[RMDB]
This 207-nucleotide RNA was probed chemically with 2A3. Values cover nucleotides 27 to 156. For 2A3, 887 sequencing reads were counted.
RNA sequence: GGGAACGACUCGAGUAGAGUCGAAAACUUGGCUUAGGGUCUUUUCCGAACUUGCGGAUAACUUCAGCCGUCUUUUCAUAAACCAGCCAUUGAUAAGGUCGUGGCUCAAUCUCACCCGUAUGAACAACUGACCGCAAUUUGUCUAUAUCCAGCCCCGCACAGAGCGUAUGUUCGCAUACGCUCUGUGAAAAGAAACAACAACAACAAC
Reactivity to 2A3 in 0.01 (KOAc 150mM, MgCl2 10mM, bicine 150mM(pH8.5), 24C), signal-to-noise 2, nucleotides 027 to 156: c010u050u120g050g030c000u020u090a150g000g030g040u000c030u050u050u060u000c010c030g020a050a070c090u070u110g030c040g000g080a080u070a110a080c070u070u050c070a040g030c030c030g030u040c030u030u090u060u040c040a030u070a080a090a130c020c000a020g040c010c020a070u170u280g060a070u090a190a120g110g010u070c050g050u080g030g020c050u000c050a060a060u020c070u020c060a030c000c030c000g030u110a090u140g040a070a000c020a020a010c130u060g040a040c000c010g000c030a040a040u020u110u090g030u040c060u030a100u010a030u150c050c010a020g080c010c020c010c050g000
The data come from the RNA Mapping Database (RMDB), library OK3TST. For 2A3 the reverse transcriptase was SuperScript II with manganese. Conditions: 150 mM KOAc, 10 mM MgCl2 and 150 mM bicine (pH 8.5), 24 C. As a SHAPE reagent, 2A3 marks flexible, mostly unpaired nucleotides at the ribose 2'-OH.